[RMDB]
RNA sequence: GGGAACGACUCGAGUAGAGUCGAAAAAGCACGGACGCGUCUAUGUGGGCAACGCGGCAUGGAUGCAUGUGUUGGCUGCGGCCAGACUGCCAUCGCGCGCGCACGUUAUGGGCGGACAGGCAUACUUCUGCUACGACAACUCUCCGUACAUGAGCUACCAAGUGAGACGGUUCGCCGUCUCACUUGGAAAAGAAACAACAACAACAAC
Reactivity to 2A3 in 0.01 (KOAc 150mM, MgCl2 10mM, bicine 150mM(pH8.5), 24C), signal-to-noise 1, nucleotides 027 to 156: a000g050c060a050c040g020g000a050c010g000c000g060u000c050u020a040u060g050u030g190g120g000c040a220a000c030g000c000g060g000c050a040u130g020g070a020u120g010c050a150u250g060u040g080u030u030g010g000c010u010g000c180g000g000c020c000a010g010a110c000u010g000c030c000a020u030c030g000c000g010c000g000c000g000c090a000c020g090u110u170a020u000g060g010g010c010g030g030a010c000a060g020g000c000a030u010a190c000u060u010c000u040g030c040u110a060c070g010a020c000a020a170c000u000c000u000c030c010g100u070a110c010a140u110g030a000g000c020u040a070

Notes
The data come from the RNA Mapping Database (RMDB), library OK3TST. Structure probing data (2A3) for a 207-nucleotide construct. 2A3 adducts were read by reverse transcription with SuperScript II with manganese.